The record gives the reactivity of an RNA of 207 nucleotides to DMS and 2A3.
Conditions: 150 mM KOAc, 10 mM MgCl2 and 150 mM bicine (pH 8.5), 24 C.
The DMS profile rests on 1,812 reads.
[RMDB]
RNA sequence: GGGAACGACUCGAGUAGAGUCGAAAACUAGUAUUAGAUCCACCGGGACCUUCGGAAGGCCCAUUGUAUAAAGUAUAUGUUUUAGGCUAUGGUAACAAUAGGAUCAAUGGGAGCUUUUAUAAGACCAUGCGUACGAUAGCAUCAUACCCAGAACAAAAACUGUCCCUUAUUUCGAUAAGGGACAGUUAAAAGAAACAACAACAACAAC
Reactivity to DMS in 0.01 (KOAc 150mM, MgCl2 10mM, bicine 150mM(pH8.5), 24C), signal-to-noise 1, nucleotides 027 to 156: c050u000a100g010u000a120u000u000a180g000a120u020c020c030a150c060c050g070g050g000a030c010c020u000u000c110g050g020a090a070g020g000c000c020c040a130u000u000g010u000a050u000a020a110a150g050u010a080u000a120u020g000u000u000u000u000a070g020g010c090u000a040u000g020g040u020a100a050c030a090a150u010a100g030g010a090u000c020a060a030u010g010g020g000a150g010c040u000u000u010u000a050u000a050a080g010a090c020c000a050u000g000c030g040u000a110c020g000a100u000a080g000c010a300u000c020a050u010a080c040c010c020a180g020a050a060c070a040a090a080
Reactivity to 2A3 in 0.01 (KOAc 150mM, MgCl2 10mM, bicine 150mM(pH8.5), 24C), signal-to-noise 1, nucleotides 027 to 156: c040u060a020g060u040a080u100u060a030g020a080u010c000c000a050c030c060g000g030g110a170c010c010u120u050c090g180g030a110a020g020g010c010c000c000a020u030u040g020u000a060u030a070a130a030g030u020a020u010a000u270g070u030u000u030u170a020g040g010c020u010a000u060g070g000u020a040a060c050a060a090u020a140g030g000a030u040c000a090a000u030g050g000g010a060g000c020u060u130u000u050a150u040a060a030g030a050c010c020a020u030g030c070g000u060a040c020g030a020u000a040g010c020a060u070c000a030u140a050c000c020c000a030g040a110a040c130a060a000a000